[RMDB]
RNA sequence: GGGAACGACUCGAGUAGAGUCGAAAAGCUGAUGGACAGUGCGGUCUAUGUGGAGAUGCUGCAGAUCCUGCUGCCGCACUUCAGCGACGCACGAGAGGUCGUGCGCUCCUCCUGCAUCAACCUGUAUGGGAAGGUGGUCCAGAAGCUUCGGGCACCAGCUGGUGAGCCAGUUCGCUGGCUCACCAGCAAAAGAAACAACAACAACAAC
Reactivity to 2A3 in 0.01 (KOAc 150mM, MgCl2 10mM, bicine 150mM(pH8.5), 24C), signal-to-noise 1, nucleotides 027 to 156: g050c000u030g020a050u070g010g000a000c000a010g000u000g000c000g020g050u020c070u150a190u170g010u030g000g070a300g000a230u070g110c190u180g020c150a030g020a130u010c010c000u000g050c010u000g000c050c000g000c000a000c000u000u000c000a020g000c010g000a000c020g060c010a030c000g000a000g070a060g220g300u070c000g000u010g000c000g000c000u050c000c000u120c000c000u020g010c030a020u020c000a000a080c010c000u170g090u300a130u300g030g000g000a030a030g000g000u000g020g040u010c000c000a020g000a010a010g020c000u000u040c010g040g090g010c160a080c000c000a010

Conditions: 150 mM KOAc, 10 mM MgCl2 and 150 mM bicine (pH 8.5), 24 C.
Structure probing data (2A3) for a 207-nucleotide construct.
2A3 adducts were read by reverse transcription with SuperScript II with manganese.